The data come from the RNA Mapping Database (RMDB), library OK1LIB. This 177-nucleotide RNA was probed chemically with 2A3. Reactivities are given for positions 27 through 126. For 2A3 the reverse transcriptase was SuperScript II with manganese. Conditions: 150 mM KOAc, 10 mM MgCl2 and 150 mM bicine (pH 8.5), 24 C.

[RMDB]
RNA sequence: GGGAACGACUCGAGUAGAGUCGAAAAGAAGUGGCAGGGACAUGCCCCAUAAGCUCGUUCUAGCAACAUAUGUUUGGCUAGUUCGAGCGAUUAGUCUCGAGGAGCGUCCUCUCGCCUCUUGACGAGAGCCUGAUAGUCGCUUCGGCGACUAUCAGGCAAAAGAAACAACAACAACAAC
Reactivity to 2A3 in 0.01 (KOAc 150mM, MgCl2 10mM, bicine 150mM(pH8.5), 24C), signal-to-noise 1, nucleotides 027 to 126: g070a030a000g000u030g010g000c010a000g040g000g000a020c000a080u300g000c000c000c000c000a030u030a100a080g000c000u000c000g000u000u000c000u000a000g000c000a050a030c070a000u120a060u300g250u020u060u050g110g000c000u000a000g000u000u000c000g000a000g000c000g000a000u000u100a000g130u040c030u010c040g030a200g000g000a090g010c000g000u020c020c000u020c000u000c030g010c000c000u000c000u000u000g000a000c080g010a030g020a000